[RMDB]
RNA sequence: GGGAACGACUCGAGUAGAGUCGAAAAGAAUGUAAGUGCGUAAUCGCGCCUUGACGUGAGUGAGACAAGACAGAAUGCUAUCCAAAGUAAGAUAGCAUAGCUCACAAUACGCUGAUCUGUCAUAGAAACUCACGAUACUCUUCGGAGUAUCGUGAGUAAAAGAAACAACAACAACAAC
Reactivity to DMS in 0.01 (KOAc 150mM, MgCl2 10mM, bicine 150mM(pH8.5), 24C), signal-to-noise 2, nucleotides 027 to 126: g000a160a080u040g020u040a060a170g000u050g020c020g110u000a070a300u010c020g000c000g020c010c090u060u000g000a230c000g000u010g000a090g000u060g030a000g000a200c160a130a070g010a050c020a000g000a180a080u000g030c000u010a000u000c000c090a080a270a150g040u090a090a090g000a000u020a000g010c000a040u000a010g000c000u050c000a000c030a250a080u000a010c060g030c040u000g020a100u000c000u000g020u020c040a100u020a150g040a110a050
Reactivity to 2A3 in 0.01 (KOAc 150mM, MgCl2 10mM, bicine 150mM(pH8.5), 24C), signal-to-noise 2, nucleotides 027 to 126: g130a030a050u190g010u300a050a140g010u070g070c010g000u050a140a050u090c010g000c040g000c000c040u080u150g080a090c030g010u010g020a040g000u010g000a010g020a050c030a140a020g030a000c000a000g030a060a020u000g000c000u000a000u020c020c020a080a070a070g110u080a130a000g160a000u000a000g010c000a000u000a000g000c010u010c000a000c010a020a030u060a000c050g000c090u040g030a120u080c000u010g020u000c000a000u050a140g160a000a090